[RMDB]
RNA sequence: GGGAACGACUCGAGUAGAGUCGAAAACCUGGCGCGGCAGCGCCGGCAUGUGGACCGGCACCUAUCACACGGCGAUGGAAGGGGCGCUGCGGGUCCCGCUCAUCGUGCGCUGGCCUGGCAAGGUGCAGCAUGCAGUAUCAUUCGUGAUACUGCAUGCAAAAGAAACAACAACAACAAC
Reactivity to DMS in 0.01 (KOAc 150mM, MgCl2 10mM, bicine 150mM(pH8.5), 24C), signal-to-noise 4, nucleotides 027 to 126: c030c000u010g000g000c040g040c110g020g020c140a060g010c010g030c010c030g010g020c140a050u010g040u000g010g010a070c070c030g000g010c010a060c030c010u010a120u020c040a090c060a100c050g010g010c060g010a090u000g000g030a100a200g000g000g020g010c020g010c080u000g010c150g020g010g000u000c000c020c030g000c070u000c070a030u000c030g010u010g000c020g020c050u010g010g000c030c040u000g010g010c080a080a020g000g000u000g010c090a160
Reactivity to 2A3 in 0.01 (KOAc 150mM, MgCl2 10mM, bicine 150mM(pH8.5), 24C), signal-to-noise 4, nucleotides 027 to 126: c000c000u030g060g010c050g000c030g090g000c020a050g000c040g000c030c000g000g060c040a060u130g020u120g050g010a030c010c040g080g020c000a020c010c000u060a070u130c010a030c010a000c140g130g030c040g060a080u030g020g050a070a040g010g020g020g010c230g040c170u120g060c080g090g050g010u000c020c000c000g020c020u050c010a070u040c000g040u100g050c050g000c020u040g140g090c000c020u020g050g000c040a040a030g000g000u020g050c020a020
Structure probing data (DMS and 2A3) for a 177-nucleotide construct. Source: RMDB library OK2TST, as collected in RNAgym. Conditions: 150 mM KOAc, 10 mM MgCl2 and 150 mM bicine (pH 8.5), 24 C. For DMS, 5,299 sequencing reads were counted.